[RMDB]
RNA sequence: GGGAACGACUCGAGUAGAGUCGAAAACGACCGCAGUUCGCUGCGGUCGAAAAGAACUGACUACCGUUCGCGUAGCCGGUGUCAGUUUAAGGGCGGAGAUUAAAACCCUGACGUUCGCGUCAGGGAAGAGAAUUUAUUUGUUCGCAAAUAAAUUCUCAAAAGAAACAACAACAACAAC
Reactivity to DMS in 0.01 (KOAc 150mM, MgCl2 10mM, bicine 150mM(pH8.5), 24C), signal-to-noise 6, nucleotides 027 to 126: c020g010a010c000c000g030c000a020g020u000u020c170g020c010u000g010c000g000g010u000c000g010a010a030a120a170g010a020a010c000u000g000a010c000u010a040c000c000g010u010u000c120g020c140g020u000a100g010c300c000g010g000u000g000u000c010a020g000u000u000u000a050a150g010g010g010c080g010g000a100g000a120u000u010a050a090a140a110c010c000c000u000g010a010c000g010u000u010c200g020c010g000u000c000a010g000g010g010a000a020
Reactivity to 2A3 in 0.01 (KOAc 150mM, MgCl2 10mM, bicine 150mM(pH8.5), 24C), signal-to-noise 5, nucleotides 027 to 126: c010g000a000c010c000g000c010a010g010u050u120c180g040c100u010g000c000g000g010u000c000g000a000a000a000a000g010a010a000c010u010g010a000c010u120a050c080c000g050u100u150c060g010c090g270u160a020g030c040c010g000g000u010g010u010c000a000g000u000u010u030a040a020g030g030g030c110g070g030a130g000a070u090u270a050a080a110a170c000c000c000u000g010a000c010g020u040u080c290g010c000g100u000c010a000g000g000g010a020a000
The data come from the RNA Mapping Database (RMDB), library M2PK50.
Chemical mapping of a 177-nucleotide RNA with DMS and 2A3.
The reactions ran in a buffer of 150 mM KOAc, 10 mM MgCl2 and 150 mM bicine (pH 8.5), at 24 C.
For 2A3, 8,402 sequencing reads were counted.
For 2A3 the reverse transcriptase was SuperScript II with manganese.
For DMS, 7,810 sequencing reads were counted.